[RMDB]
RNA sequence: GGGAACGACUCGAGUAGAGUCGAAAAUUAGGAUUGGGACAACUCACUCAGUUGUCCGCUCGACUAGCGGGAGCCAUAGCGAGAUGCCACUGCUACCUGUCGUUGUAGCGGUGCUUCUCGUCGACGACUUUGUUCAUGGGUUCGCCCAUGAACAAAGAAAAGAAACAACAACAACAAC
Reactivity to 2A3 in 0.01 (KOAc 150mM, MgCl2 10mM, bicine 150mM(pH8.5), 24C), signal-to-noise 1, nucleotides 027 to 126: u110u050a060g090g010a040u070u250g060g050g030a000c000a010a000c000u040c090a180c010u230c030a080g000u000u010g000u000c000c000g050c010u020c020g050a050c050u040a020g000c030g000g070g010a000g070c030c010a050u130a050g020c010g010a030g000a010u010g110c090c010a000c000u000g000c020u020a010c010c020u300g210u300c050g100u200u120g010u020a010g000c020g000g020u000g000c000u000u000c000u000c000g000u000c010g040a010c020g040a030
Reactivity to DMS in 0.01 (KOAc 150mM, MgCl2 10mM, bicine 150mM(pH8.5), 24C), signal-to-noise 2, nucleotides 027 to 126: u000u010a070g000g010a170u010u000g030g000g040a020c010a000a000c000u000c210a130c240u010c090a080g000u000u000g000u000c000c000g030c050u000c060g010a160c060u000a070g040c090g000g000g010a090g000c070c050a090u010a180g010c020g000a010g010a020u000g020c190c020a010c000u000g030c010u000a010c010c120u010g020u030c220g020u000u000g010u000a010g000c010g020g010u000g000c010u000u000c000u010c000g000u000c040g010a080c150g010a090